[RMDB]
RNA sequence: GGGAACGACUCGAGUAGAGUCGAAAAGACCCCACUCGACAGGGUCCGCGUACCAUCCUUUCUUACCUGAUGGCCGGCAUGGUCCCAGCCUCCUCGCUGGCGCCGGCUGGGCAACAUUCCGAGGGGAACAGAGUACCGUUCGCGGUACUCAAAAGAAACAACAACAACAAC
Reactivity to 2A3 in 0.01 (KOAc 150mM, MgCl2 10mM, bicine 150mM(pH8.5), 24C), signal-to-noise 9, nucleotides 027 to 129: g040a020c000c010c010c010a030c040u090c040g150a050c040a100g020g020g030u020c020c020g030c030g030u060a090c010c000a040u050c010c020u050u130u080c030u080u120a140c020c020u080g040a100u100g080g030c000c000g010g000c040a100u160g050g020u120c010c030c010a020g010c000c010u090c000c010u070c040g020c020u030g010g020c020g000c040c000g030g010c010u020g000g010g000c020a090a040c010a140u130u070c040c010g020a030g020g010g000g010a010a040c040a050
Reactivity to DMS in 0.01 (KOAc 150mM, MgCl2 10mM, bicine 150mM(pH8.5), 24C), signal-to-noise 8, nucleotides 027 to 129: g040a030c040c000c000c040a070c090u050c060g010a070c150a110g000g000g010u020c060c070g030c000g050u040a120c030c030a070u030c030c060u030u040u020c050u000u080a130c120c090u000g020a130u030g050g000c070c000g010g000c040a060u050g000g040u000c280c000c010a000g020c040c060u030c020c000u000c160g000c030u000g010g010c200g010c030c020g010g080c040u000g000g020g100c040a090a070c080a090u030u110c110c060g020a060g000g000g000g000a070a110c140a120